Chemical mapping of a 177-nucleotide RNA with DMS and 2A3. The DMS profile rests on 1,445 reads. Conditions: 150 mM KOAc, 10 mM MgCl2 and 150 mM bicine (pH 8.5), 24 C. Source: RMDB library OK2TST, as collected in RNAgym. Reactivities are given for positions 27 through 126. Values are in units of 0.01, from 0 to 300, in steps of 10.
RNA sequence: GGGAACGACUCGAGUAGAGUCGAAAACUUCGUCGCAAUGCGGAUGGCGGAGCUCAAUUUCUGUUCCAGGGUGUUGACGUUCUUCUCUCUACCAAUUUUCCUGCAGAGCUCGUCAACCUUGAGACGGCGAUAUGCCGGUGUUCGCACCGGCAUAUCGAAAAGAAACAACAACAACAAC
Reactivity to DMS in 0.01 (KOAc 150mM, MgCl2 10mM, bicine 150mM(pH8.5), 24C), signal-to-noise 1, nucleotides 027 to 126: c040u010u000c010g000u000c010g050c080a110a080u010g020c120g010g010a070u000g000g000c020g000g010a000g000c030u000c080a150a140u000u000u010c050u000g020u000u000c050c030a060g010g010g020u020g020u000u000g000a060c040g010u000u010c030u000u010c050u000c040u000c020u010a060c170c080a070a040u000u000u000u000c030c020u010g030c200a080g000a020g020c080u000c020g020u010c010a040a030c030c000u000u000g000a070g000a010c000g020g010
Reactivity to 2A3 in 0.01 (KOAc 150mM, MgCl2 10mM, bicine 150mM(pH8.5), 24C), signal-to-noise 1, nucleotides 027 to 126: c000u020u010c020g010u040c010g040c090a160a210u160g100c030g210g030a230u170g000g000c000g040g020a030g120c020u000c040a120a210u100u230u080c050u030g110u120u050c030c010a020g000g030g000u120g120u100u200g010a030c040g010u050u020c020u150u000c030u050c000u000c010u000a100c020c000a030a020u050u110u160u210c010c020u030g020c030a030g000a020g010c010u010c000g030u000c000a010a040c010c000u050u030g070a080g010a010c000g010g030